[RMDB]
RNA sequence: GGGAACGACUCGAGUAGAGUCGAAAACGAGACUUUUUUCCGUGCGCUGCCAGGCGCGGACGACACAGACACGUGCAACGCCCUCGAUCGGCUCACUUCCUUGGUGGCGGCUAUCGCGAUUUAGCUAACUCAUGGUGGUGUUCGCACCACCAUGAGUAAAAGAAACAACAACAACAAC
Reactivity to DMS in 0.01 (KOAc 150mM, MgCl2 10mM, bicine 150mM(pH8.5), 24C), signal-to-noise 2, nucleotides 027 to 126: c100g020a070g000a030c090u000u010u000u040u000u020c040c060g000u000g000c010g020c040u030g050c020c120a080g000g020c050g000c000g020g000a090c090g010a090c120a020c090a070g030a050c030a080c140g050u030g010c100a070a080c070g020c050c000c040u020c180g000a030u000c020g000g000c040u000c000a110c070u000u000c000c040u000u010g000g000u000g000g030c000g010g000c050u000a060u000c110g000c030g000a150u000u020u030a080g090c070u000a090
Reactivity to 2A3 in 0.01 (KOAc 150mM, MgCl2 10mM, bicine 150mM(pH8.5), 24C), signal-to-noise 3, nucleotides 027 to 126: c060g030a030g100a110c060u090u110u090u010u130u050c010c000g000u020g000c050g020c010u070g070c050c030a020g020g000c020g030c000g020g010a020c050g000a010c030a000c000a060g150a060c010a010c130g050u070g050c020a020a050c040g010c010c000c000u010c020g110a110u020c010g010g010c010u010c000a040c000u060u130c010c000u060u070g060g050u040g080g000c000g010g000c060u050a050u110c030g000c020g060a050u020u030u140a050g040c060u020a050
Record summary: The data come from the RNA Mapping Database (RMDB), library OK1LIB. Structure probing data (DMS and 2A3) for a 177-nucleotide construct. Reactivities are given for positions 27 through 126. The RNA was probed in 150 mM KOAc, 10 mM MgCl2 and 150 mM bicine (pH 8.5) at 24 C.